Chemical mapping of a 207-nucleotide RNA with DMS and 2A3.
RNA sequence: GGGAACGACUCGAGUAGAGUCGAAAACUGCAUUUGAAAGCCCAAGUUGAUCAGCUUACCGGAAGAAAUGAAGAAUUAAGACAGGAGCUCAGGGAAUCUCGGAAAGAGGCUAUAAAUUAUUCACAGCAGUUGGCAAAAGCUAAUUUAAAGGUGAGAACUUGCGAACAAAGUUCGCUUUGUUCGCAAGAAAAGAAACAACAACAACAAC
Reactivity to DMS in 0.01 (KOAc 150mM, MgCl2 10mM, bicine 150mM(pH8.5), 24C), signal-to-noise 1, nucleotides 027 to 156: c040u020g020c080a280u010u000u030g000a120a150a170g010c040c030c000a040a140g030u000u010g020a130u010c020a090g030c010u000u000a110c020c000g010g010a090a040g000a090a090a130u000g020a100a070g040a060a070u020u020a030a130g010a120c080a010g010g020a070g010c090u010c020a050g000g010g000a080a060u010c020u000c000g010g000a060a050a090g020a090g010g020c050u000a110u000a080a020a100u000u000a090u000u000c010a080c040a080g020c040a040g030u000u000g030g040c020a020a070a020a080g000c040u000a020a040u000u000u010a030a090a140g000g000u000g000a120g020a140a190
Reactivity to 2A3 in 0.01 (KOAc 150mM, MgCl2 10mM, bicine 150mM(pH8.5), 24C), signal-to-noise 1, nucleotides 027 to 156: c050u050g000c040a130u000u000u210g080a090a020a030g000c060c000c000a030a040g040u040u070g130a110u110c040a070g000c010u040u070a040c020c010g010g090a040a040g000a060a130a030u070g020a030a060g050a040a090u080u120a140a030g020a010c060a040g050g000a010g010c040u060c060a020g080g000g000a040a000u000c040u020c030g000g000a060a030a060g040a060g010g020c030u020a020u030a190a050a050u150u060a060u080u070c000a000c010a040g000c000a010g000u050u000g000g050c010a040a030a030a030g000c000u020a000a010u100u070u180a140a100a010g030g020u060g030a020g010a020a110